[RMDB]
RNA sequence: GGGAACGACUCGAGUAGAGUCGAAAAGAAGACCGCUGGCGAAGGCGGGUCCAUGCGAAACACGUGACGAACAGGAACGAAACCGGGCGUAGCAAACCGCAUUAGAUACGCAAGCGGUCCACGCCGAAAAUUUUAAGAAAUUCGUUUCUUAAAAUUUAAAAGAAACAACAACAACAAC
Reactivity to DMS in 0.01 (KOAc 150mM, MgCl2 10mM, bicine 150mM(pH8.5), 24C), signal-to-noise 3, nucleotides 027 to 126: g010a160a100g000a010c000c000g010c020u010g010g000c020g020a110a070g000g000c000g010g000g010u040c300c120a110u000g000c020g010a100a110a030c050a050c010g010u010g010a220c050g000a090a060c160a120g000g010a090a070c050g010a050a150a110c170c030g000g010g010c010g010u010a140g010c050a020a050a070c000c000g000c010a090u030u050a050g000a170u030a130c070g010c030a070a020g000c010g000g000u000c010c030a000c060g000c010c010g020a040
Reactivity to 2A3 in 0.01 (KOAc 150mM, MgCl2 10mM, bicine 150mM(pH8.5), 24C), signal-to-noise 2, nucleotides 027 to 126: g040a060a030g010a010c010c000g030c010u030g030g020c040g070a070a010g080g060c010g030g000g000u060c040c020a070u030g000c000g080a090a010a010c020a000c000g020u030g090a040c010g020a090a020c050a200g100g010a170a030c040g010a060a010a010c010c000g000g030g000c000g000u000a010g000c030a070a070a050c000c000g020c010a000u070u190a080g050a170u250a210c000g000c020a000a000g000c010g000g000u000c000c000a010c080g010c010c000g060a130